[RMDB]
RNA sequence: GGGAACGACUCGAGUAGAGUCGAAAAGCCAUAUCGGCCGGGCUGCCGCUCACCCGGACUUCAUCUUGACCGAUGUAGCUCCGGAGGUGGUCAUCGAGGUCCUCGGCAUGUCCGGCAAUGCAGACUAUGACGCCCGAAUUGCCGAGAAGCGAGCACAAUCUCUCAAAUUAUUCGUAAUUUGAGAGAUAAAAGAAACAACAACAACAAC
Reactivity to 2A3 in 0.01 (KOAc 150mM, MgCl2 10mM, bicine 150mM(pH8.5), 24C), signal-to-noise 4, nucleotides 027 to 156: g000c000c010a030u050a040u140c050g040g010c000c000g030g000g000c010u020g000c020c000g040c040u110c040a030c000c000c000g010g010a000c010u010u030c010a000u000c010u090u170g080a060c030c040g000a000u000g000u020a020g020c120u000c010c000g010g000a030g000g030u040g000g020u070c050a050u120c090g070a060g030g100u050c030c020u020c010g020g000c010a030u140g040u010c020c010g010g000c020a010a000u050g010c020a000g050a070c070u090a070u190g030a060c060g040c000c010c010g050a140a180u090u060g000c020c020g030a030g040a080a010g090c060g040a030g040c110a030c020a110
Reactivity to DMS in 0.01 (KOAc 150mM, MgCl2 10mM, bicine 150mM(pH8.5), 24C), signal-to-noise 2, nucleotides 027 to 156: g000c020c000a130u000a100u000c030g020g050c000c040g000g010g020c030u000g010c030c020g060c130u010c040a110c050c000c020g010g000a060c000u030u000c020a030u000c000u000u010g000a170c300c240g000a060u000g020u000a030g040c040u000c010c030g010g010a180g010g010u000g010g010u000c080a090u020c090g010a140g010g010u000c040c000u000c030g000g020c000a050u000g020u010c000c000g040g000c050a050a040u000g030c070a110g010a060c000u000a140u000g020a130c020g000c020c010c030g000a090a140u000u000g050c000c000g000a100g000a110a120g010c040g000a100g010c090a160c210a130
Description:
The record gives the reactivity of an RNA of 207 nucleotides to 2A3 and DMS. The RNA was probed in 150 mM KOAc, 10 mM MgCl2 and 150 mM bicine (pH 8.5) at 24 C. For 2A3 the reverse transcriptase was SuperScript II with manganese.